Conditions: 150 mM KOAc, 10 mM MgCl2 and 150 mM bicine (pH 8.5), 24 C. The record gives the reactivity of an RNA of 207 nucleotides to 2A3 and DMS. For DMS the reverse transcriptase was MarathonRT. In probing experiments dimethyl sulfate is read out at A N1 and C N3, which are open when not base-paired. 2A3 adducts were read by reverse transcription with SuperScript II with manganese. It was measured as part of the RMDB library OK3TST.
RNA sequence: GGGAACGACUCGAGUAGAGUCGAAAAACAAAGUAGAAAUCAGCCCUUUCUCAAAUCUACGCAACAAUGUUCGAGAUAAAGGGAACCCAAAAGCAACCUAAUAUUUUGAACCUCCUUUUACAUCAUUUCGAGAUAAGUUUCUGAAGUAAUGAGAGAACUAGUACUAGUGUUUCGACACUAGUACUAGAAAAGAAACAACAACAACAAC
Reactivity to 2A3 in 0.01 (KOAc 150mM, MgCl2 10mM, bicine 150mM(pH8.5), 24C), signal-to-noise 5, nucleotides 027 to 156: a000c060a010a100a040g040u080a030g080a070a150a100u160c050a070g020c000c000c000u030u040u000c060u040c030a160a220a130u040c040u130a060c060g040c100a090a080c050a100a200u210g010u060u070c030g020a010g000a040u080a100a050a010g030g000g010a040a030c040c000c020a040a140a000a000g060c030a040a070c010c020u070a080a090u060a170u100u120u070u100g020a040a030c020c020u040c010c050u050u100u100u160a060c030a060u100c010a060u060u080u120c100g020a050g030a090u070a230a040g020u020u050u020c040u020g040a090a020g020u100a020a080u110g010a020g000a010g010a100a030
Reactivity to DMS in 0.01 (KOAc 150mM, MgCl2 10mM, bicine 150mM(pH8.5), 24C), signal-to-noise 2, nucleotides 027 to 156: a080c050a100a030a100g020u010a100g020a090a060a140u020c080a140g040c050c080c040u000u010u010c010u020c030a050a010a030u000c090u000a060c100g020c040a120a050c100a080a050u000g030u020u000c030g020a030g030a050u000a080a190a210g000g020g010a160a070c100c020c000a080a090a090a080g010c020a020a210c000c010u010a030a190u000a050u000u000u000u000g000a030a110c020c030u000c040c010u010u000u000u000a070c080a090u000c030a110u010u000u000c010g020a100g030a030u010a100a110g000u000u010u000c020u000g030a050a120g040u020a050a050u000g000a110g020a190g010a100a260

Source information:
The DMS profile rests on 1,730 reads.